Background: Structure probing data (DMS and 2A3) for a 177-nucleotide construct. For DMS the reverse transcriptase was MarathonRT. For DMS, 2,240 sequencing reads were counted. Reactivities are given for positions 27 through 126. The data come from the RNA Mapping Database (RMDB), library OK2TRN.
[RMDB]
RNA sequence: GGGAACGACUCGAGUAGAGUCGAAAAGAGUCCAUCACGACCGUGCGCUCCUUGGACAUUGCGUGAAAGCUACCGAUUGGUGUCGGGCGGCUGGGCUUGCCUAACGACGCGGGCAUGGUGCGGAGGACCGGUGUACACCAUUCGUGGUGUACACCGGAAAAGAAACAACAACAACAAC
Reactivity to DMS in 0.01 (KOAc 150mM, MgCl2 10mM, bicine 150mM(pH8.5), 24C), signal-to-noise 2, nucleotides 027 to 126: g000a190g020u000c000c010a110u000c140a090c020g020a050c030c010g020u010g000c020g030c010u000c030c090u010u000g020g010a040c040a040u000u000g010c020g010u000g030a090a140a050g000c030u000a240c030c000g000a040u000u010g020g020u010g030u000c000g000g020g000c140g010g010c010u010g030g000g000c000u000u000g000c020c000u000a030a040c170g000a060c180g020c010g010g030g040c000a030u000g020g010u010g020c030g000g000a110g000g010a110
Reactivity to 2A3 in 0.01 (KOAc 150mM, MgCl2 10mM, bicine 150mM(pH8.5), 24C), signal-to-noise 2, nucleotides 027 to 126: g050a010g020u000c010c000a130u070c040a040c050g010a030c000c010g060u040g070c020g010c010u020c020c000u060u040g000g030a050c040a140u050u280g030c080g030u140g110a170a040a000g010c020u020a030c040c050g070a060u020u200g250g040u240g050u100c020g010g000g100c130g030g010c030u030g000g260g000c000u010u080g020c000c000u030a060a040c040g020a040c120g000c000g030g060g030c020a030u030g050g080u200g100c040g010g010a030g020g020a030